[RMDB]
Structure probing data (2A3 and DMS) for a 207-nucleotide construct. Conditions: 150 mM KOAc, 10 mM MgCl2 and 150 mM bicine (pH 8.5), 24 C. Reactivities are given for positions 27 through 156. The data come from the RNA Mapping Database (RMDB), library RNAMAK.

RNA sequence: GGGAACGACUCGAGUAGAGUCGAAAAGCGUACUACGCUCUUAGUACCCACAUGGAGCCUCAAAAAUGCUUUAUCCCAAAUAGGAUAAAGCGCCAAUGAGGCUAUGAAGUGUGGAGAACUGAGCGUAUCGCAAAAGUGAAAGGUUCGCCUUUCACAAGACUCAUCAGAAGUUCGCUUCUGAUGAGUCAAAAGAAACAACAACAACAAC
Reactivity to 2A3 in 0.01 (KOAc 150mM, MgCl2 10mM, bicine 150mM(pH8.5), 24C), signal-to-noise 3, nucleotides 027 to 156: g010c000g070u120a080c070u000a000c050g000c000u000c000u010u000a000g000u000a000c000c020c000a000c010a010u040g010g050a000g000c000c000u010c000a010a020a030a010a010u010g000c010u000u020u020a000u010c010c020c040a260a300a130u300a090g000g000a000u000a000a000a000g000c000g010c000c000a020a020u020g000a000g000g000c000u010a010u010g000a000a020g010u010g000u000g020g000a000g000a000a000c040u050g000a000g000c000g000u010a020u100c000g000c000a010a090a000a070g000u000g010a000a000a000g060g030u080u150c220g200c010c000u000u010u000c000a010c010a000a010
Reactivity to DMS in 0.01 (KOAc 150mM, MgCl2 10mM, bicine 150mM(pH8.5), 24C), signal-to-noise 2, nucleotides 027 to 156: g000c010g050u000a040c150u000a050c030g010c000u020c000u010u000a060g020u010a250c290c000c000a050c000a030u000g000g000a000g010c000c010u000c010a000a040a300a110a070u010g000c020u010u000u000a000u000c010c010c010a030a180a200u000a010g020g010a010u000a000a010a000g010c000g040c050c130a050a300u000g030a050g030g040c000u000a010u010g000a110a300g020u010g020u000g000g010a020g000a170a280c290u000g000a050g040c010g010u000a010u000c000g010c000a030a040a100a180g050u000g010a010a020a020g010g010u000u000c190g000c010c000u000u000u010c000a000c000a040a290